[RMDB]
RNA sequence: GGGAACGACUCGAGUAGAGUCGAAAACACCCCCACGAAGAAGUCGAACGCGGGGUGCAGCUCAAGAGCCAGGUUGGCGUUGUCGGGCUGCAUAAACUGCUCCGGGGUCAUCUGGCCUUCCGCGACCCGCCUCCCGUCUAUUCGUAGACGGGAGGCGAAAAGAAACAACAACAACAAC
Reactivity to 2A3 in 0.01 (KOAc 150mM, MgCl2 10mM, bicine 150mM(pH8.5), 24C), signal-to-noise 1, nucleotides 027 to 126: c030a060c000c000c040c000c000a000c080g000a000a110g030a080a000g050u080c130g020a090a000c120g040c080g000g000g000g000u000g040c000a000g000c000u000c040a000a130g060a000g030c000c050a130g230g100u150u130g110g070c130g120u010u010g080u120c130g090g000g000c020u000g000c000a040u080a000a140a000c000u010g000c000u120c030c000g000g000g120g130u060c030a160u030c070u180g040g000c000c030u050u010c000c040g080c030g020a000c000c000
This 177-nucleotide RNA was probed chemically with 2A3. For 2A3, 373 sequencing reads were counted. Source: RMDB library OK1LIB, as collected in RNAgym.